[RMDB]
RNA sequence: GGGAACGACUCGAGUAGAGUCGAAAACCAUUCCUUAUACCUCGAGUAUUGCUGAAUUCAGUUUAGCGUGCAUGCUCUUGGCUAUUCUCAUAGUGAUUGUCAAAUUUGGAGUUACUUAUUCGUCAAUAAAACACUACCACGUUCGCGUGGUAGUGAAUCAUAAUGUAUGCUUCGGCAUACAUUAUGAAAAAGAAACAACAACAACAAC
Reactivity to DMS in 0.01 (KOAc 150mM, MgCl2 10mM, bicine 150mM(pH8.5), 24C), signal-to-noise 4, nucleotides 027 to 156: c030c040a190u000u000c020c010u000u010a180u000a040c030c020u000c100g010a080g030u000a040u000u010g010c010u010g010a080a090u000u010c180a170g020u000u000u000a070g030c040g040u010g020c100a190u000g010c010u000c020u030u000g010g020c020u000a090u000u000c040u000c070a170u000a110g010u010g000a060u000u000g010u010c020a060a070a150u000u000u000g000g000a180g000u000u000a050c070u000u000a140u000u000c070g010u000c030a060a040u000a030a110a080a160c000a020c010u000a010c000c000a020c010g030u000u000c280g050c020g060u010g000g000u000a000g010u000g010a020a040
Reactivity to 2A3 in 0.01 (KOAc 150mM, MgCl2 10mM, bicine 150mM(pH8.5), 24C), signal-to-noise 7, nucleotides 027 to 156: c020c000a030u050u060c010c020u080u080a060u050a130c000c020u040c020g020a020g020u020a040u120u180g020c020u040g030a170a130u200u120c080a120g180u060u060u170a060g020c060g020u080g040c030a020u020g000c000u000c000u030u000g000g000c010u050a050u140u070c070u030c060a140u110a100g090u100g100a080u070u120g080u120c070a060a110a200u120u080u090g080g000a080g040u080u080a100c060u110u110a080u170u130c080g070u030c070a110a080u120a160a090a010a000c000a000c010u000a000c000c000a010c010g030u040u040c170g010c000g120u000g000g010u000a000g000u000g000a000a000
Overview:
The record gives the reactivity of an RNA of 207 nucleotides to DMS and 2A3. Values cover nucleotides 27 to 156. It was measured as part of the RMDB library M2RFPK. For DMS the reverse transcriptase was MarathonRT. The 2A3 profile rests on 4,372 reads. Conditions: 150 mM KOAc, 10 mM MgCl2 and 150 mM bicine (pH 8.5), 24 C.